[RMDB]
RNA sequence: GGGAACGACUCGAGUAGAGUCGAAAAGGCGCCACUAGUGCAUCGAAUCCUGGGAAACAGGCACGGAGAACAAAAUCCGGUAAGCUCGGGAAGCCGUCAACUUCCGCCGUAUUGAUGAAAACAACUAGGGAAAUCUUAUAUUCGUAUAAGAUUUCCCAAAAGAAACAACAACAACAAC
Reactivity to DMS in 0.01 (KOAc 150mM, MgCl2 10mM, bicine 150mM(pH8.5), 24C), signal-to-noise 3, nucleotides 027 to 126: g020g020c130g010c000c030a090c130u010a020g000u010g020c070a020u040c040g020a060a070u010c000c000u020g000g000g010a090a070a090c080a010g000g020c120a110c030g000g000a030g000a150a120c170a080a120a110a110u000c020c000g010g000u010a070a080g010c020u000c040g000g000g000a070a090g020c060c010g010u020c090a080a080c030u010u000c020c010g010c050c030g000u000a080u000u020g010a040u000g000a120a060a110a070c130a030a060c170u010a180
Reactivity to 2A3 in 0.01 (KOAc 150mM, MgCl2 10mM, bicine 150mM(pH8.5), 24C), signal-to-noise 5, nucleotides 027 to 126: g040g000c020g010c030c010a040c030u030a010g040u030g140c020a060u040c040g070a090a030u050c000c000u000g030g020g080a110a150a030c030a040g050g000c020a010c020g070g000a040g020a100a060c090a180a100a030a070u010c010c010g020g010u040a040a030g000c020u010c030g000g020g000a030a010g030c060c010g080u030c000a030a010c020u020u000c010c010g050c020c020g060u070a070u070u090g060a080u020g010a020a030a040a100c100a020a040c050u080a030
Source information
Structure probing data (DMS and 2A3) for a 177-nucleotide construct. Reactivities are given for positions 27 through 126. For 2A3 the reverse transcriptase was SuperScript II with manganese. For DMS the reverse transcriptase was MarathonRT. It was measured as part of the RMDB libraries RFM100 and RFMREP.